[RMDB]
RNA sequence: GGGAACGACUCGAGUAGAGUCGAAAAGAAGCAGUCCUUAUUGUGUGUGAUGUUUAGUCAUCGCACUGUUCCUACGGGCUGCCAACGUAGGGCCAAUGUGCCGAGAGGCACUAGAAGUACGGCUUAUUAUGAUGCAUCGCCGUACCAACGAUGCUGAAUUACGUAUAUAUUUCGAUAUAUACGUAAUAAAAGAAACAACAACAACAAC
Reactivity to DMS in 0.01 (KOAc 150mM, MgCl2 10mM, bicine 150mM(pH8.5), 24C), signal-to-noise 7, nucleotides 027 to 156: g010a100a070g010c010a030g020u010c020c010u000u010a080u000u010g020u010g020u010g020u000g020a020u010g030u010u000u010a220g020u000c000a020u000c000g030c010a020c000u010g010u000u010c050c020u010a110c150g020g010g010c010u000g020c030c040a040a050c060g020u000a070g010g000g000c050c030a110a150u000g020u000g010c020c010g020a210g000a300g010g040c010a020c010u000a110g010a110a100g010u000a080c060g010g010c020u000u000a080u000u000a100u010g020a210u010g000c020a040u000c040g010c010c040g010u010a150c080c020a040a030c010g000a040u000g020c000u010g010a140
Reactivity to 2A3 in 0.01 (KOAc 150mM, MgCl2 10mM, bicine 150mM(pH8.5), 24C), signal-to-noise 9, nucleotides 027 to 156: g160a040a020g000c010a000g020u030c030c030u100u120a220u270u200g090u020g000u000g000u000g020a020u010g090u060u200u200a280g120u160c010a010u010c000g010c000a010c010u020g070u040u100c010c000u020a040c030g000g000g000c020u010g010c000c010a060a000c050g120u100a080g030g030g010c010c010a080a080u080g010u010g000c000c000g010a040g010a010g000g000c000a000c010u030a050g030a120a020g060u070a030c050g000g000c010u010u010a040u060u080a110u150g160a030u120g010c020a020u030c010g000c030c020g050u030a060c020c000a010a030c030g020a020u040g000c020u020g050a060
Record summary: Source: RMDB library OK3TST, as collected in RNAgym. Chemical mapping of a 207-nucleotide RNA with DMS and 2A3. 2A3 adducts were read by reverse transcription with SuperScript II with manganese. In probing experiments dimethyl sulfate is read out at A N1 and C N3, which are open when not base-paired. The 2A3 profile rests on 11,042 reads.